Structure probing data (DMS and 2A3) for a 177-nucleotide construct. For DMS the reverse transcriptase was MarathonRT. It was measured as part of the RMDB library OK2TRN.
RNA sequence: GGGAACGACUCGAGUAGAGUCGAAAAAUUGUGGGGUUGGUGCCGUCCCCAUGUCCAUCAACAUUCCGGACGCGAAGUUCACCCGCAAACUAAAGGACCCGAAACCUUCGGCCCUGAAAUGCGUGGUGACUCUAGUACCUUUCGAGGUACUAGAGUCAAAAGAAACAACAACAACAAC
Reactivity to DMS in 0.01 (KOAc 150mM, MgCl2 10mM, bicine 150mM(pH8.5), 24C), signal-to-noise 3, nucleotides 027 to 126: a100u010u020g020u000g010g010g010g010u000u000g040g040u000g000c060c040g000u010c000c000c010c030a060u020g000u010c070c040a090u020c120a050a070c160a130u000u000c070c050g000g020a060c130g020c120g010a060a070g010u000u000c080a020c000c000c000g000c000a010a020a050c170u000a040a100a010g000g000a050c150c040c110g010a010a110a170c290c250u000u000c040g010g000c120c000c000u000g000a070a160a180u000g000c010g010u010g030g010u000
Reactivity to 2A3 in 0.01 (KOAc 150mM, MgCl2 10mM, bicine 150mM(pH8.5), 24C), signal-to-noise 1, nucleotides 027 to 126: a000u240u240g020u040g020g020g000g030u070u030g010g000u040g090c010c000g000u020c010c020c020c020a020u150g040u040c010c000a020u120c080a050a120c040a060u200u130c060c010g030g010a020c010g050c070g120a050a010g040u060u100c010a020c000c000c000g000c040a100a000a000c040u050a040a070a020g000g000a020c010c040c060g090a100a140a170c060c030u090u020c020g020g000c000c000c000u000g000a000a000a010u040g000c020g070u170g050g000u010